[RMDB]
RNA sequence: GGGAACGACUCGAGUAGAGUCGAAAAGAUAUGGAUAGCGUGUAUGACUGCUGAGGCGAUAAGCCACUCUCGGAAACGAGAGAAUGGCUUUUGACGCCUUUGCAGUCAUACACGCUAUCCUAAGUCACUCAGACUUAUUGUUCGCAAUAAGUCUGAGAAAAGAAACAACAACAACAAC
Reactivity to DMS in 0.01 (KOAc 150mM, MgCl2 10mM, bicine 150mM(pH8.5), 24C), signal-to-noise 1, nucleotides 027 to 126: g000a050u000a300u010g000g000a010u000a010g010c000g030u010g000u000a000u000g000a040c010u000g010c000u000g010a010g000g000c010g030a170u000a020a020g030c010c000a090c010u010c000u000c010g000g000a100a100a250c000g010a020g010a000g040a070a050u010g000g000c020u020u010u000u000g000a250c030g000c000c020u000u010u000g010c020a000g040u000c000a000u000a000c000a000c000g020c000u000a000u000c000c010u000a000a030g000u000c030a300